[RMDB]
RNA sequence: GGGAACGACUCGAGUAGAGUCGAAAAAAAAAGAUAUGGAGUUAAAUCGUCUUGGAUUUAGCAACGAAUCUGCUUCGGAAACGAAGCAGACUAUUGCUUGUCAGACGUUAACUCCUAAGUCAAAAAAGAUUAAGGUAUUGUUCGCAAUACCUUAAUCAAAAGAAACAACAACAACAAC
Reactivity to DMS in 0.01 (KOAc 150mM, MgCl2 10mM, bicine 150mM(pH8.5), 24C), signal-to-noise 3, nucleotides 027 to 126: a040a040a100a100a070g010a030u000a300u000g000g010a010g020u010u010a000a040a060u020c030g020u000c000u000u010g010g010a020u010u000u000a010g030c000a010a000c130g030a040a150u000c000u000g000c010u000u000c000g000g000a130a090a170c000g030a020a010g000c000a000g010a000c050u000a200u000u000g000c000u000u010g020u000c000a030g000a010c010g000u000u000a000a000c000u000c000c000u000a020a040g010u010c010a000a050a060a090a120a110
Reactivity to 2A3 in 0.01 (KOAc 150mM, MgCl2 10mM, bicine 150mM(pH8.5), 24C), signal-to-noise 3, nucleotides 027 to 126: a010a010a010a000a030g090a080u150a080u160g000g010a000g020u020u000a070a240a240u300c030g010u030c050u100u170g120g010a100u300u300u300a000g000c000a000a010c050g160a070a300u000c010u010g000c000u000u010c020g030g020a060a060a040c010g000a000a000g020c000a000g000a000c010u050a020u000u030g000c010u010u010g040u020c000a020g010a020c000g000u000u010a000a000c000u000c000c000u000a050a010g020u000c000a070a050a050a080a090a130
Chemical mapping of a 177-nucleotide RNA with DMS and 2A3.
The 2A3 profile rests on 4,089 reads.
Reactivities are given for positions 27 through 126.
The reactions ran in a buffer of 150 mM KOAc, 10 mM MgCl2 and 150 mM bicine (pH 8.5), at 24 C.
It was measured as part of the RMDB library TTRDES.